The record gives the reactivity of an RNA of 177 nucleotides to 2A3 and DMS. The RNA was probed in 150 mM KOAc, 10 mM MgCl2 and 150 mM bicine (pH 8.5) at 24 C. DMS adducts were read by reverse transcription with MarathonRT. For 2A3, 3,399 sequencing reads were counted. Reactivities are given for positions 27 through 126. Values are in units of 0.01, from 0 to 300, in steps of 10. The DMS profile rests on 9,336 reads.

RNA sequence: GGGAACGACUCGAGUAGAGUCGAAAAAUCGUGGUCAUGGAGUCCCUGAGUGAUGGUAUGGACAUCCCAGAAUCCAUCGAGUUUGUGAACUCGCUGUCGUCAUCAUCACCAGUGUUGACAUUAUUGCCGGACUAUGACUAUUCGUAGUCAUAGUCCGAAAAGAAACAACAACAACAAC
Reactivity to 2A3 in 0.01 (KOAc 150mM, MgCl2 10mM, bicine 150mM(pH8.5), 24C), signal-to-noise 6, nucleotides 027 to 126: a000u100c060g010u050g040g000u040c030a010u060g070g000a040g060u020c020c020c000u030g070a120g050u020g020a030u020g010g020u110a100u130g110g030a030c020a110u140c040c000c010a030g090a090a070u050c040c020a020u020c040g000a010g030u090u160u200g260u170g080a040a020c000u000c000g020c050u040g040u100c050g070u050c020a030u020c000a000u020c000a030c020c020a020g010u020g020u110u110g030a040c020a060u100u180a110u090u170g040c030
Reactivity to DMS in 0.01 (KOAc 150mM, MgCl2 10mM, bicine 150mM(pH8.5), 24C), signal-to-noise 4, nucleotides 027 to 126: a030u020c040g030u010g010g040u010c030a040u020g000g010a080g020u020c040c040c010u000g000a110g020u000g000a010u000g000g000u030a070u010g000g000a050c090a090u030c040c040c010a150g020a160a140u030c080c040a010u010c040g000a050g000u000u000u030g000u040g010a060a020c010u000c010g000c190u000g000u020c060g000u010c060a040u010c030a010u000c010a020c030c010a070g000u000g010u010u000g010a040c080a060u000u020a050u010u000g000c300